[RMDB]
RNA sequence: GGGAACGACUCGAGUAGAGUCGAAAAACUGGAAAACGCCUCGCUUUUUUCCUGUAAAACACCGCAACGCAGGAAAAGCGCAUGCUUAUCGGGACAACAACCCAACGCGGCAGGUGUACCGUUGGGCGAUUCAUUCAUACUUCGGUAUGAAUGAAUCAAAAGAAACAACAACAACAAC
Reactivity to 2A3 in 0.01 (KOAc 150mM, MgCl2 10mM, bicine 150mM(pH8.5), 24C), signal-to-noise 2, nucleotides 027 to 126: a000c020u040g040g040a040a030a030a010c020g000c000c010u000c000g000c030u130u080u010u010u110u050c000c000u000g000u010a050a060a060a060c090a060c050c060g050c120a040a060c120g000c010a000g000g000a000a010a000a010g030c010g030c020a040u170g000c000u080u040a060u120c030g050g000g030a020c030a110a020c010a040a040c080c000c000a000a000c000g020c040g040g000c040a080g080g110u070g030u060a080c000c000g010u000u010g000g020g020c020
Reactivity to DMS in 0.01 (KOAc 150mM, MgCl2 10mM, bicine 150mM(pH8.5), 24C), signal-to-noise 2, nucleotides 027 to 126: a110c060u000g000g010a070a030a080a100c180g010c030c050u000c030g000c010u000u010u010u000u010u010c000c010u000g010u000a060a090a100a140c120a110c110c090g010c070a100a090c250g000c000a000g010g000a030a000a030a030g010c050g010c220a030u000g010c040u010u000a180u010c040g010g000g010a070c040a030a030c100a060a120c010c010c000a010a030c020g010c100g020g010c060a100g000g010u000g010u000a110c090c000g000u000u000g000g000g000c190

Conditions: 150 mM KOAc, 10 mM MgCl2 and 150 mM bicine (pH 8.5), 24 C. Chemical mapping of a 177-nucleotide RNA with 2A3 and DMS. Values cover nucleotides 27 to 126. It was measured as part of the RMDB library RFMREP. DMS adducts were read by reverse transcription with MarathonRT. 2A3 adducts were read by reverse transcription with SuperScript II with manganese.